[RMDB]
RNA sequence: GGGAACGACUCGAGUAGAGUCGAAAAGAUAUGGAUUUGAACUACGACCGAGGGAGCGUUGAAAUGCAAAUCUAUUCGGAAACGAAUAGAUUUGCAUGGAGCUCCCGAGGUCGCAAAUCCUAAGUCAUCACUAAGAAAGGUUCGCCUUUCUUAGUGAAAAAGAAACAACAACAACAAC
Reactivity to DMS in 0.01 (KOAc 150mM, MgCl2 10mM, bicine 150mM(pH8.5), 24C), signal-to-noise 3, nucleotides 027 to 126: g010a050u000a300u020g000g000a010u000u000u000g000a180a100c200u030a300c040g000a010c020c000g010a300g010g010g010a000g000c010g010u010u000g000a120a170a000u000g010c020a000a020a000u000c010u000a010u000u000c010g010g000a090a100a300c000g000a010a000u010a010g000a010u000u000u010g000c000a000u000g000g000a110g010c010u000c000c010c000g010a040g000g000u010c000g000c010a010a010a000u000c000c000u020a070a130g000u000c050a250